RNA sequence: GGGAACGACUCGAGUAGAGUCGAAAAAUCACAACUACUAGAUUCUACUAUACCAGAUGCAUCAAUUCCUGGUGUAUGAGGAUACUUUCUCGUAACACCCUUAUUACCAUUUGCAGAAAGUGCAUCCCCCUAAAUCGAUAUUCGUAUCGAUUUAGGGAAAAGAAACAACAACAACAAC
Reactivity to DMS in 0.01 (KOAc 150mM, MgCl2 10mM, bicine 150mM(pH8.5), 24C), signal-to-noise 6, nucleotides 027 to 126: a070u010c130a090c210a080a120c100u010a040c090u000a090g000a070u000u000c010u010a030c030u000a090u040a090c060c040a040g010a040u020g030c050a040u010c090a060a100u020u020c050c010u000g000g020u000g020u000a020u020g000a050g000g010a080u040a070c150u000u000u010c020u020c060g010u000a070a060c090a030c040c000c080u040u010a040u030u020a090c120c070a050u010u010u010g000c120a050g000a080a050a070g000u000g010c030a010u010c030c140
Reactivity to 2A3 in 0.01 (KOAc 150mM, MgCl2 10mM, bicine 150mM(pH8.5), 24C), signal-to-noise 9, nucleotides 027 to 126: a000u170c100a070c060a140a110c050u200a020c020u060a050g010a090u040u020c000u030a090c010u030a030u050a140c010c030a030g030a100u070g030c030a050u050c070a090a170u170u090c020c020u020g010g010u010g010u020a100u100g020a030g010g020a020u060a180c050u060u110u040c040u030c050g040u030a120a030c020a080c030c000c010u070u120a090u080u130a120c020c040a130u060u040u130g010c030a030g040a110a080a020g100u010g020c010a040u040c020c010